RNA sequence: GGGAACGACUCGAGUAGAGUCGAAAAAAGAUUCAUCGUCUUGAACUUGAUACACAUAGUAUAGCACCUUAAAAACGAAUCAUCUGCUAGUUCAGUAUUUUCUACUUACAAUCACUCCCUCCCAGGGCCUCAGAUCAUGAUUCGUCAUGAUCUGAGGAAAAGAAACAACAACAACAAC
Reactivity to DMS in 0.01 (KOAc 150mM, MgCl2 10mM, bicine 150mM(pH8.5), 24C), signal-to-noise 2, nucleotides 027 to 126: a020a010g000a090u030u030c140a040u010c170g000u010c020u010u000g020a070a080c080u020u000g000a070u010a020c040a080c140a090u000a040g010u000a080u020a030g050c030a080c030c010u000u000a040a030a020a060a080c060g020a100a030u020c040a040u000c030u000g030c080u010a080g000u020u000c010a030g020u000a050u000u010u000u030c020u000a050c040u000u010a040c090a040a110u030c040a100c020u000c000c020c050u000c000c010c000a070g010g000g010
Reactivity to 2A3 in 0.01 (KOAc 150mM, MgCl2 10mM, bicine 150mM(pH8.5), 24C), signal-to-noise 5, nucleotides 027 to 126: a000a000g110a070u100u050c050a110u060c070g090u000c040u060u060g010a070a040c000u040u060g030a020u130a080c060a010c020a080u110a060g110u050a060u030a100g030c030a050c030c030u120u130a060a050a000a020a040c050g020a040a050u080c030a020u000c030u020g020c010u060a040g040u060u080c030a020g010u020a130u030u070u010u040c030u020a080c010u050u050a040c060a030a060u040c010a020c050u050c010c010c000u030c010c000c000a000g040g020g000
Conditions: 150 mM KOAc, 10 mM MgCl2 and 150 mM bicine (pH 8.5), 24 C.
Structure probing data (DMS and 2A3) for a 177-nucleotide construct.
It was measured as part of the RMDB libraries RFM100 and RFMREP.